[RMDB]
RNA sequence: GGGAACGACUCGAGUAGAGUCGAAAAGUGAGGAUGAGCUUGCACUCUGGAUUACGGAGGUAAGUCAUGGCCUUUGCAAGUUUUUGGUAAUCUGGGGGUCAUCGCCAUCAGUUUCAUUCCUCUCCACGUAUAAAUCGCUAUUCGUAGCGAUUUAUACAAAAGAAACAACAACAACAAC
Reactivity to DMS in 0.01 (KOAc 150mM, MgCl2 10mM, bicine 150mM(pH8.5), 24C), signal-to-noise 5, nucleotides 027 to 126: g010u030g010a020g010g020a030u000g000a090g000c010u010u000g010c140a100c010u010c000u000g000g010a040u010u030a040c020g010g010a020g000g010u010a050a110g020u030c190a040u020g010g000c010c030u000u010u020g030c140a090a090g000u000u020u010u030u030g010g010u000a020a010u000c010u010g000g000g000g000g010u010c030a040u000c170g020c040c070a030u010c060a050g000u010u020u010c020a070u000u010c020c020u010c030u010c020c030a100c270
Reactivity to 2A3 in 0.01 (KOAc 150mM, MgCl2 10mM, bicine 150mM(pH8.5), 24C), signal-to-noise 9, nucleotides 027 to 126: g140u090g010a020g020g000a010u020g010a020g030c010u040u040g010c070a090c090u000c000u020g050g020a080u080u060a050c040g030g030a010g020g040u110a100a050g080u100c040a060u130g090g000c010c000u070u080u140g080c090a110a150g040u030u060u080u170u230g150g000u050a030a020u020c020u010g030g000g000g010g040u050c020a070u060c090g020c030c010a070u070c040a040g010u040u160u040c030a030u120u100c010c000u020c010u010c030c020a070c080

An RNA of 177 nucleotides, treated with DMS and 2A3 and read out base by base. The data come from the RNA Mapping Database (RMDB), library OK1LIB. For 2A3 the reverse transcriptase was SuperScript II with manganese.